[RMDB]
RNA sequence: GGGAACGACUCGAGUAGAGUCGAAAAAUAGAGUAUCCUUAUAUCUCACAUGAAAAGAAAUUGAAUUCCUGUUGUAGAAUCGUUGAGCGCAACGUCGUACGUGCUGCUCUUCUUGCCGGUUCAUUUGCAUAUGGUCUACCUUCGGGUAGACCAUAUGAAAAGAAACAACAACAACAAC
Reactivity to DMS in 0.01 (KOAc 150mM, MgCl2 10mM, bicine 150mM(pH8.5), 24C), signal-to-noise 3, nucleotides 027 to 126: a060u000a120g020a060g010u010a060u000c080c070u010u010a060u000a070u010c030u000c020a060c110a050u000g000a050a050a070a070g000a090a050a140u010u010g010a090a150u010u000c010c020u000g010u000u000g020u000a150g020a050a040u000c080g010u000u000g000a060g020c030g000c030a050a060c030g010u020c300g000u010a300c060g030u000g000c020u020g030c020u010c010u010u010c030u020u000g030c220c030g000g020u000u000c030a110u000u000u000g010
Structure probing data (DMS) for a 177-nucleotide construct.
The reactions ran in a buffer of 150 mM KOAc, 10 mM MgCl2 and 150 mM bicine (pH 8.5), at 24 C.
The data come from the RNA Mapping Database (RMDB), library 15KREP.
Reactivities are given for positions 27 through 126.